Notes
This 177-nucleotide RNA was probed chemically with 2A3 and DMS. Source: RMDB library OK2TST, as collected in RNAgym. The 2A3 profile rests on 1,246 reads. DMS adducts were read by reverse transcription with MarathonRT.

[RMDB]
RNA sequence: GGGAACGACUCGAGUAGAGUCGAAAAUGCAACAAUCUUGUCGCUGGCUUUGCCGUGCGGCAGCGCCCCACGCCAGCCACUGGCGACAAUGGUGUCAAAAGAGGCUUUUUCUGCGCCCUGCUGGCGAACGCAUGGCAUACUUCGGUAUGCCAUGCGUAAAAGAAACAACAACAACAAC
Reactivity to 2A3 in 0.01 (KOAc 150mM, MgCl2 10mM, bicine 150mM(pH8.5), 24C), signal-to-noise 1, nucleotides 027 to 126: u130g020c000a030a040c030a060a140u030c070u090u050g010u020c000g000c020u020g020g050c030u170u190u300g030c030c020g080u030g010c020g000g000c000a000g000c070g000c000c000c000c000a040c030g000c020c000a000g000c050c010a090c060u080g050g000c000g040a000c000a000a020u210g080g000u100g000u060c040a130a020a000a080g140a090g010g030c100u030u000u040u060u090c060u050g050c000g000c000c000c040u080g110c070u050g040g000c020g020a040
Reactivity to DMS in 0.01 (KOAc 150mM, MgCl2 10mM, bicine 150mM(pH8.5), 24C), signal-to-noise 2, nucleotides 027 to 126: u020g010c080a110a080c150a060a050u020c080u000u010g010u000c000g050c000u000g000g030c040u030u000u020g020c090c000g000u010g010c080g010g010c010a050g010c250g070c030c000c000c050a290c080g020c080c070a050g000c010c150a130c150u010g030g020c120g020a040c090a020a100u000g020g000u000g000u000c030a040a180a100a060g020a180g010g000c000u010u000u000u010u000c050u000g030c130g000c010c010c140u040g000c130u030g010g010c050g010a140